[RMDB]
RNA sequence: GGGAACGACUCGAGUAGAGUCGAAAAACACCAUACGUGGUGAAACUCUGCCCUCCGUGUUCACAGCGGACCUUGAUUUAAUGUCAUACAAUUAAGGCACGCGGUGAAUGCCAAUUAGCGGAGCCAACUACCGGUGCGCAUUCGUGCGCACCGGUAGAAAAGAAACAACAACAACAAC
Reactivity to 2A3 in 0.01 (KOAc 150mM, MgCl2 10mM, bicine 150mM(pH8.5), 24C), signal-to-noise 2, nucleotides 027 to 126: a000c020a000c000c000a000u050a020c300g100u020g000g000u000g010a030a000a010c030u000c000u000g000c010c020c030u100c050c010g000u010g030u000u000c000a000c000a000g000c000g090g000a090c000c020u020u020g060a020u070u060u130a290a170u230g200u290c140a030u020a100c060a010a000u000u000a000a000g020g000c070a010c020g000c000g000g000u000g020a000a020u030g000c000c000a150a240u160u050a090g000c020g000g010a000g000c000c000a040a130
About this RNA
An RNA of 177 nucleotides, treated with 2A3 and read out base by base. It was measured as part of the RMDB library RFM100. Conditions: 150 mM KOAc, 10 mM MgCl2 and 150 mM bicine (pH 8.5), 24 C. Values cover nucleotides 27 to 126.